[RMDB]
RNA sequence: GGGAACGACUCGAGUAGAGUCGAAAAUCACUCUCACGUUCUCGAACACUCGUGAGAGAGAGAUCGUACGUACGAGAGUGUUCACACUCGAUCGUGAACUCUCGUGUGUGAGAUCUCUCACACACGAUCGAUCGAUCUCACUCGUGUGUGUGAGAUCAGAUGGGUACUGCUUCGGCAGUACCCAUCUAAAAGAAACAACAACAACAAC
Reactivity to 2A3 in 0.01 (KOAc 150mM, MgCl2 10mM, bicine 150mM(pH8.5), 24C), signal-to-noise 1, nucleotides 027 to 156: u090c020a070c000u010c000u010c010a000c070g050u030u070c110u040c110g100a220a010c020a050c070u060c000g000u000g010a070g000a010g000a000g000a000g000a000u010c030g010u200a050c010g000u000a010c010g020a010g080a000g030u070g270u060u070c020a000c000a030c030u220c140g220a300u150c130g050u000g040a050a020c000u000c000u000c000g030u010g000u000g000u010g010a060g010a020u000c000u000c000u000c000a010c000a000c000a010c050g040a090u140c000g050a070u210c070g000a050u060c010u010c060a050c010u040c030g000u060g040u050g060u020g000u000g040a020g000a020u090c010